[RMDB]
This 177-nucleotide RNA was probed chemically with 2A3.
RNA sequence: GGGAACGACUCGAGUAGAGUCGAAAAUUGUAUUGCAUAUACAACUAUGCGAUGCACUUUGUUCAUUUUAACUUUGGAUAUAUGUGCCUUGCUAUGAACGCGUUCAUUUUUAAGUGACCGGACCCUACUGUGCCACACAGUUCGCUGUGUGGCACAGAAAAGAAACAACAACAACAAC
Reactivity to 2A3 in 0.01 (KOAc 150mM, MgCl2 10mM, bicine 150mM(pH8.5), 24C), signal-to-noise 2, nucleotides 027 to 126: u060u010g000u000a000u000u090g110c060a010u000a000u000a230c040a130a080c070u020a030u100g000c000g000a010u000g040c010a000c050u040u070u080g010u040u010c030a030u000u000u030u300a040a200c130u110u140u030g000g000a000u000a000u000a010u140g010u010g000c000c020u010u010g000c020u040a030u190g060a050a000c010g060c110g050u010u000c000a050u010u000u110u070u190a190a110g050u070g000a000c030c010g010g060a050c030c010c000u000a040
Overview
The 2A3 profile rests on 524 reads.